[RMDB]
RNA sequence: GGGAACGACUCGAGUAGAGUCGAAAAGAGCCACAUACCUACCCAAGGUGAAAGCUCCUUCUCUCGCAAUGUGUAACUCAUGAUUCUCAUGACCCCCGGUUGGAGAGAUCCGGACUAGGAGCCAGGGAAAGCCGCUGCCGAUUCGUCGGCAGCGGAAGUAUGGUAUCUAGUUCGCUAGAUACCAUACAAAAGAAACAACAACAACAAC
Reactivity to DMS in 0.01 (KOAc 150mM, MgCl2 10mM, bicine 150mM(pH8.5), 24C), signal-to-noise 1, nucleotides 027 to 156: g000a080g010c010c040a130c080a120u010a010c040c020u010a180c100c050c090a180a130g040g050u010g020a050a090a120g030c050u000c000c020u020u020c030u000c010u030c010g000c040a120a040u000g010u000g010u010a020a070c100u000c040a090u020g000a150u010u000c060u000c010a090u000g000a150c030c010c020c000c000g030g020u000u010g000g000a080g010a200g020a120u000c010c030g070g020a130c040u000a100g000g020a050g030c020c040a040g030g000g000a050a060a180g000c020c000g000c000u000g000c000c010g060a130u000u020c300g000u000c000g000g050c000a010g010c000g010g020a000a020
Reactivity to 2A3 in 0.01 (KOAc 150mM, MgCl2 10mM, bicine 150mM(pH8.5), 24C), signal-to-noise 2, nucleotides 027 to 156: g030a020g070c090c020a070c010a110u270a080c030c000u030a060c010c010c020a070a020g000g020u020g090a110a040a010g040c020u010c000c010u080u010c000u000c010u000c020g110c130a060a080u090g020u030g050u180a110a090c030u040c020a010u030g060a210u300u030c080u000c170a050u040g070a110c000c000c000c060c050g050g000u020u040g020g000a000g000a000g010a050u060c100c060g040g030a060c020u010a000g000g060a000g000c030c030a030g010g010g020a080a050a010g000c020c000g000c000u000g030c000c000g020a020u010u040c110g050u000c000g090g050c000a000g010c010g000g000a000a000